The data come from the RNA Mapping Database (RMDB), library TTRDEL.
Chemical mapping of a 177-nucleotide RNA with DMS and 2A3.
For 2A3 the reverse transcriptase was SuperScript II with manganese.
DMS adducts were read by reverse transcription with MarathonRT.
The RNA was probed in 150 mM KOAc, 10 mM MgCl2 and 150 mM bicine (pH 8.5) at 24 C.
[RMDB]
RNA sequence: GGGAACGACUCGAGUAGAGUCGAAAAGAUAUGGACUAGCUUUGAUCGUCUUGAUCGAUGAAAUCGGAAACGAUGGAGAUCUUGACGGGAGCUAGUCCUAAGUCAAAGGAUCACUUCGGUGAUCCAACAUCUAGUAUCUCUUCGGAGAUACUAGAUGAAAAGAAACAACAACAACAAC
Reactivity to DMS in 0.01 (KOAc 150mM, MgCl2 10mM, bicine 150mM(pH8.5), 24C), signal-to-noise 8, nucleotides 027 to 126: g010a040u010a300u010g000g010a020c000u000a000g010c010u000u000u000g000a120u010c010g010u000c000u000u000g000a010u000c000g010a130u020g020a070a120a010u010c000g010g000a120a100a200c000g010a020u000g000g010a080g000a000u000c000u000u000g000a010c010g020g000g000a000g010c000u000a000g010u010c000c000u000a000a080g010u000c040a080a130a130g000g000a010u000c000a000c000u000u010c210g030g010u000g000a010u000c000c000a050a110
Reactivity to 2A3 in 0.01 (KOAc 150mM, MgCl2 10mM, bicine 150mM(pH8.5), 24C), signal-to-noise 9, nucleotides 027 to 126: g030a020u070a040u150g000g000a000c000u000a000g020c020u120u110u140g150a190u300c010g000u010c010u010u020g000a000u010c020g300a300u040g020a030a030a010u010c000g010g020a080a030a040c010g000a000u010g000g010a020g000a010u010c000u000u020g000a000c000g000g010g000a000g000c000u000a000g000u000c000c000u000a010a000g010u010c030a030a030a150g000g000a000u000c000a000c020u040u110c300g110g000u010g000a000u000c000c000a000a000